[RMDB]
Structure probing data (2A3 and DMS) for a 177-nucleotide construct. The data come from the RNA Mapping Database (RMDB), library VIROID. The reactions ran in a buffer of 150 mM KOAc, 10 mM MgCl2 and 150 mM bicine (pH 8.5), at 24 C. For DMS, 796 sequencing reads were counted.
RNA sequence: GGGAACGACUCGAGUAGAGUCGAAAACCUUAAUUCUGUAAGAGGGACCUUAUUUAAAAUAAAAGUACUACCACAAACAAAGCCUAUGGUGUGUUCUAUUCUUAGUUAGGUGUCCGAUCGUUUGGUUUUACGUAAUCAAGUUCGCUUGAUUACGUAAAAAAGAAACAACAACAACAAC
Reactivity to 2A3 in 0.01 (KOAc 150mM, MgCl2 10mM, bicine 150mM(pH8.5), 24C), signal-to-noise 1, nucleotides 027 to 126: c020c000u120u120a250a160u230u150c130u240g070u100a070a000g010a150g000g000g040a000c010c000u000u080a010u080u170u120a120a100a070a050u110a010a100a000a060g020u000a010c040u010a040c020c010a060c060a090a240a080c060a110a170a030g070c010c020u100a020u020g010g000u050g000u000g020u040u000c020u010a070u080u000c060u060u050a010g040u020u000a010g010g040u020g150u000c010c010g050a020u070c020g150u080u100u100g120g000u020u020
Reactivity to DMS in 0.01 (KOAc 150mM, MgCl2 10mM, bicine 150mM(pH8.5), 24C), signal-to-noise 1, nucleotides 027 to 126: c020c010u000u030a130a060u000u020c150u010g000u000a100a110g000a160g020g000g010a040c030c010u010u000a020u010u020u000a010a020a040a040u000a040a050a070a150g000u000a030c040u010a040c000c000a050c110a000a100a160c090a140a130a190g020c200c130u010a050u000g000g030u010g000u010g000u010u000c040u000a040u010u000c160u000u000a030g000u000u000a080g010g010u000g010u000c030c040g000a130u010c080g020u010u010u000g010g000u000u000